[RMDB]
RNA sequence: GGGAACGACUCGAGUAGAGUCGAAAACCAAGGUAGUUCGCUACCUUGGAAAGAAAGCUCGAGCGAAGGGAAGGGAAAGGACGCUCGAGCAACCCACCGAAAAAAGAGCAUGCUUCGGCAUGCUCAAGUACAAAAUAAUGUUCGCAUUAUUUUGUACAAAAGAAACAACAACAACAAC
Reactivity to 2A3 in 0.01 (KOAc 150mM, MgCl2 10mM, bicine 150mM(pH8.5), 24C), signal-to-noise 6, nucleotides 027 to 126: c000c000a000a000g000g000u000a010g010u030u080c180g020c100u000a000c000c010u010u010g000g010a020a020a000g050a020a080a010g010c000u000c000g010a000g000c020g040a100a080g120g040g060a100a090g090g020g040a080a140a100g090g020a020c010g000c000u000c010g010a000g000c000a010a010c010c000c000a030c080c120g090a110a060a020a020a030a040g000a000g000c000a000u010g000c000u060u070c200g060g000c000a000u000g000c000u010c000a000a000
Reactivity to DMS in 0.01 (KOAc 150mM, MgCl2 10mM, bicine 150mM(pH8.5), 24C), signal-to-noise 5, nucleotides 027 to 126: c010c000a000a010g010g020u000a000g020u000u000c230g030c000u010a000c000c000u000u000g010g000a010a050a090g010a110a150a130g000c010u000c020g010a020g020c010g010a130a150g000g000g000a110a140g010g010g000a100a080a110g010g010a210c020g010c000u000c010g010a030g010c020a020a030c000c000c000a120c240c150g000a000a060a060a070a090a090g010a010g010c000a010u000g000c010u000u020c190g010g000c000a000u000g000c000u000c000a010a030